[RMDB]
Source: RMDB library TTRDEL, as collected in RNAgym. Structure probing data (2A3 and DMS) for a 177-nucleotide construct. The reactions ran in a buffer of 150 mM KOAc, 10 mM MgCl2 and 150 mM bicine (pH 8.5), at 24 C. For 2A3 the reverse transcriptase was SuperScript II with manganese. The DMS profile rests on 1,041 reads.
RNA sequence: GGGAACGACUCGAGUAGAGUCGAAAAGAUAUGGACGAUGGACAUGCUGUAGAGUCUCGGAAACGAGACGAUCAGCAACAGCCCGCUCGUCCUAAGUCAAAGACCCAAUACUUCGGUAUUGGGUCAAGUAGGACUAUCACUUCGGUGAUAGUCCUACAAAAGAAACAACAACAACAAC
Reactivity to 2A3 in 0.01 (KOAc 150mM, MgCl2 10mM, bicine 150mM(pH8.5), 24C), signal-to-noise 1, nucleotides 027 to 126: g050a010u140a000u170g010g010a000c010g000a020u250g020g000a010c030a100u120g000c000u050g100u130a060g000a040g090u010c000u000c010g080g090a050a100a070c030g020a000g000a000c000g010a040u010c000a000g030c000a000a030c030a050g030c010c000c010g020c030u010c000g000u000c000c000u000a260a010g020u020c030a040a060a210g010a000c000c010c000a000a000u000a000c000u020u140c300g200g000u020a010u030u000g000g140g000u020c020a010a000
Reactivity to DMS in 0.01 (KOAc 150mM, MgCl2 10mM, bicine 150mM(pH8.5), 24C), signal-to-noise 2, nucleotides 027 to 126: g000a000u000a300u010g010g010a000c000g010a060u000g010g000a050c030a250u000g000c000u040g010u000a010g000a300g020u000c000u010c000g030g000a030a170a200c000g010a010g000a000c000g000a140u000c000a010g020c040a090a070c300a080g000c000c000c000g010c290u000c000g000u000c000c000u000a010a060g000u010c030a080a140a090g000a010c000c010c000a000a000u000a000c000u000u000c300g000g030u000a000u000u000g010g000g030u000c000a000a010